[RMDB]
RNA sequence: GGGAACGACUCGAGUAGAGUCGAAAACCAGCUUGCCUGUGUCCUAGGGAAUUGGAAGGUCAUCCUUCACAGGAUCGUGUGGAAGUCCUGCUAGGGGCGGAAGCAUUAAAACCAUUCGAGCUAGUCAAAAACCGGCUGAUCUUCGGAUCAGCCGGAACCGAUUUGUAACGUUCGCGUUACAAAUCGGAAAAGAAACAACAACAACAAC
Reactivity to 2A3 in 0.01 (KOAc 150mM, MgCl2 10mM, bicine 150mM(pH8.5), 24C), signal-to-noise 1, nucleotides 027 to 156: c000c000a010g010c070u030u040g060c010c030u000g010u010g020u010c010c030u080a190g000g040g150a160a180u210u120g090g030a180a110g020g010u210c050a050u070c010c010u110u100c050a010c040a020g040g020a050u040c020g050u050g050u050g010g040a020a030g030u020c070c030u040g190c140u190a080g010g010g000g030c010g010g010a000a010g010c000a000u080u120a070a050a000a040c070c000a060u050u170c020g010a000g050c050u100a010g120u190c040a010a010a000a090a090c000c000g010g040c000u000g000a000u000c020u000u130c200g040g000a000u010c000a020g000c030c000g010g000a000a000
An RNA of 207 nucleotides, treated with 2A3 and read out base by base. The RNA was probed in 150 mM KOAc, 10 mM MgCl2 and 150 mM bicine (pH 8.5) at 24 C. It was measured as part of the RMDB library M2RFPK. For 2A3 the reverse transcriptase was SuperScript II with manganese. For 2A3, 509 sequencing reads were counted.